Chemical mapping of a 177-nucleotide RNA with 2A3 and DMS.
For 2A3, 1,994 sequencing reads were counted.
For DMS the reverse transcriptase was MarathonRT.
2A3 adducts were read by reverse transcription with SuperScript II with manganese.
RNA sequence: GGGAACGACUCGAGUAGAGUCGAAAACACUUACUACGUGAACGGAAGCCACACGGUGUGCUUCUGAAGUACCCAUUACUGGUGCUGAUGCGAGACCGUAUACCGGAGCCGGUGCUGCGCGUAGCAGGUCCAGUGUUCAGUUCGCUGAACACUGGACAAAAGAAACAACAACAACAAC
Reactivity to 2A3 in 0.01 (KOAc 150mM, MgCl2 10mM, bicine 150mM(pH8.5), 24C), signal-to-noise 2, nucleotides 027 to 126: c000a000c010u110u170a060c020u010a000c040g000u010g100a160a020c050g000g040a040a020g010c050c000a030c030a050c150g210g030u050g020u120g020c000u000u000c000u020g030a010a000g010u020a030c000c010c010a060u040u160a090c080u080g030g000u030g010c010u030g010a070u070g050c030g030a040g120a110c120c000g040u090a060u060a060c030c040g020g030a040g060c030c040g070g000u020g000c030u000g040c010g000c000g060u000a010g040c000a030g000
Reactivity to DMS in 0.01 (KOAc 150mM, MgCl2 10mM, bicine 150mM(pH8.5), 24C), signal-to-noise 2, nucleotides 027 to 126: c070a120c040u000u000a070c070u040a070c040g040u000g000a090a250c020g000g010a040a010g000c030c010a050c040a250c160g040g010u010g020u000g040c000u000u020c000u000g010a040a040g010u010a080c010c050c150a130u020u010a060c160u000g000g010u000g000c050u000g000a120u000g010c090g020a140g000a040c040c040g000u020a100u000a040c090c030g020g000a160g000c110c090g000g000u000g000c010u000g000c040g000c040g000u000a010g000c100a050g000